[RMDB]
RNA sequence: GGGAACGACUCGAGUAGAGUCGAAAAAAAAGAUAUGGAUCGCACGCACGCGAUAAGUGUGCAAACCGUAUCGGAAACGAUACGGGACGUAUACACUUUUGACGCGUGGUGCGAUCCUAAGUCAAAAGAACUCAUUUACCUUCGGGUAAAUGAGUUCAAAAGAAACAACAACAACAAC
Reactivity to DMS in 0.01 (KOAc 150mM, MgCl2 10mM, bicine 150mM(pH8.5), 24C), signal-to-noise 2, nucleotides 027 to 126: a070a090a010a110g000a040u040a300u000g000g010a000u000c000g010c000a020c020g030c000a010c000g020c010g030a060u040a000a030g010u010g010u010g020c050a050a300a190c000c010g020u000a000u000c010g050g000a100a120a140c000g000a030u000a000c010g000g000g000a030c300g000u000a090u000a060c000a030c000u010u020u000u000g010a110c070g010c020g010u000g010g020u030g010c000g010a010u000c030c000u000a010a070g000u000c030a100a040a120a140
Reactivity to 2A3 in 0.01 (KOAc 150mM, MgCl2 10mM, bicine 150mM(pH8.5), 24C), signal-to-noise 1, nucleotides 027 to 126: a000a000a000a100g050a000u000a000u100g010g000a000u020c010g010c020a000c010g300c010a020c000g000c000g010a010u020a050a010g010u030g000u010g000c020a050a080a000c000c000g040u040a010u010c000g000g000a040a140a000c000g000a000u010a020c000g000g000g000a020c060g020u050a090u040a220c050a000c000u070u060u120u220g300a180c060g010c000g000u000g030g000u010g000c000g000a000u000c000c010u000a000a010g000u000c010a000a000a020a130